[RMDB]
Chemical mapping of a 207-nucleotide RNA with 2A3. The RNA was probed in 150 mM KOAc, 10 mM MgCl2 and 150 mM bicine (pH 8.5) at 24 C.

RNA sequence: GGGAACGACUCGAGUAGAGUCGAAAAAGCACGGUUUUUGAGGACGCAUUUUGUCCGUACGGUAAUGCCCUCCUUUACACUUUCUCGCAUGGUGCGGGAGUGUGGAGAGGAAACAAAAGCUAGUCUCGAUAGGCGGUUAACUUCGGUUAACCGCCAACUUCUCAUGCAACUUCGGUUGCAUGAGAAGAAAAGAAACAACAACAACAAC
Reactivity to 2A3 in 0.01 (KOAc 150mM, MgCl2 10mM, bicine 150mM(pH8.5), 24C), signal-to-noise 2, nucleotides 027 to 156: a000g080c030a010c000g020g020u010u000u000u000u010g090a100g060g020a040c070g040c110a100u000u000u000u100g030u000c000c020g000u040a010c060g020g050u090a090a000u170g020c000c000c000u020c030c000u060u030u040a000c010a000c020u140u150u060c030u030c010g050c040a070u270g300g080u300g140c010g000g000g000a000g000u000g000u010g030g010a050g000a010g000g050a000a050a000c020a000a020a000a000g070c030u080a010g010u000c020u010c060g070a180u170a140g000g000c000g010g000u000u000a000a010c000u030u050c250g040g000u010u010a010a000c000c000g000c000c000a000a000
It was measured as part of the RMDB library M2RFOK.